[RMDB]
Source information
Source: RMDB library M2PK50, as collected in RNAgym. Structure probing data (2A3 and DMS) for a 177-nucleotide construct. Values cover nucleotides 27 to 126.
RNA sequence: GGGAACGACUCGAGUAGAGUCGAAAACCACCGAAGUUCGCUUCGGUGGAAAAGAUACCGGUCUGGGUAUCAAAGUGAGACCCACAGACCACAGGAAACUGAAAACCGAUCCGUUCGCGGAUCGGAACGUUUACUUAACCUUCGGGUUAAGUAAACGAAAAGAAACAACAACAACAAC
Reactivity to 2A3 in 0.01 (KOAc 150mM, MgCl2 10mM, bicine 150mM(pH8.5), 24C), signal-to-noise 3, nucleotides 027 to 126: c000c000a000c000c000g010a000a000g010u050u120c120g090c170u000u000c010g020g010u010g000g000a010a000a000a040g020a020u050a010c030c000g000g000u000c010u040g010g020g000u010a030u060c040a000a050a030g210u140g060a070g030a060c010c000c000a030c000a040g000a000c000c020a010c030a070g110g060a110a090a030c060u100g050a040a060a050a120c000c000g000a010u010c000c000g020u040u070c280g010c020g060g000a000u010c000g000g000a010a000
Reactivity to DMS in 0.01 (KOAc 150mM, MgCl2 10mM, bicine 150mM(pH8.5), 24C), signal-to-noise 2, nucleotides 027 to 126: c000c000a000c010c000g000a000a000g010u000u010c190g040c020u000u000c010g010g010u000g000g000a010a020a080a110g000a070u000a010c020c010g000g000u000c010u010g000g000g030u000a000u000c010a020a080a130g010u000g010a140g000a090c010c000c010a070c040a030g000a010c020c030a140c110a030g000g010a090a080a120c050u000g000a110a060a140a170c000c000g000a000u000c000c000g020u000u020c210g000c000g010g010a010u000c010g010g010a030a050
2A3 adducts were read by reverse transcription with SuperScript II with manganese. The RNA was probed in 150 mM KOAc, 10 mM MgCl2 and 150 mM bicine (pH 8.5) at 24 C.